Conditions: 150 mM KOAc, 10 mM MgCl2 and 150 mM bicine (pH 8.5), 24 C. The record gives the reactivity of an RNA of 177 nucleotides to 2A3 and DMS.
RNA sequence: GGGAACGACUCGAGUAGAGUCGAAAAGAUAUGGAAAUUACAGUUUCGAAGAACAUUGUCGGAAACGACAAUGGGAGAAGUGUACGGUUUCCUAAGUCAAACGCUGACCUAGUUCGCUAGGUCAGCGGACCUUUUGUUAGUUCGCUAACAAAAGGUCAAAAGAAACAACAACAACAAC
Reactivity to 2A3 in 0.01 (KOAc 150mM, MgCl2 10mM, bicine 150mM(pH8.5), 24C), signal-to-noise 5, nucleotides 027 to 126: g000a000u020a000u050g000g000a020a000a000u070u030a040c020a100g220u030u040u040c250g230a300a000g000a010a000c000a000u000u000g000u000c000g000g000a000a000a000c000g000a000c000a010a010u000g000g010g010a010g000a030a030g030u030g010u070a100c250g110g050u010u010u010c000c000u000a010a000g010u000c050a150a050a070c030g000c010u000g000a010c000c000u000a010g030u060u120c270g020c240u000a000g000g000u010c000a000g000c000g000
Reactivity to DMS in 0.01 (KOAc 150mM, MgCl2 10mM, bicine 150mM(pH8.5), 24C), signal-to-noise 6, nucleotides 027 to 126: g010a020u000a040u010g000g000a020a020a040u010u000a000c000a040g020u010u000u000c010g000a110a200g000a170a240c020a000u000u010g000u000c000g010g000a000a000a020c010g010a000c000a010a020u000g000g000g000a010g010a010a020g020u000g010u000a020c300g010g000u000u000u000c000c000u000a010a150g010u000c000a160a110a300c020g000c000u010g000a010c000c010u000a010g010u010u020c270g010c010u000a000g010g000u000c000a000g010c000g010

For DMS, 9,389 sequencing reads were counted. It was measured as part of the RMDB library TTRDES. 2A3 adducts were read by reverse transcription with SuperScript II with manganese. High 2A3 reactivity points to a flexible backbone, as in loops and unpaired stretches.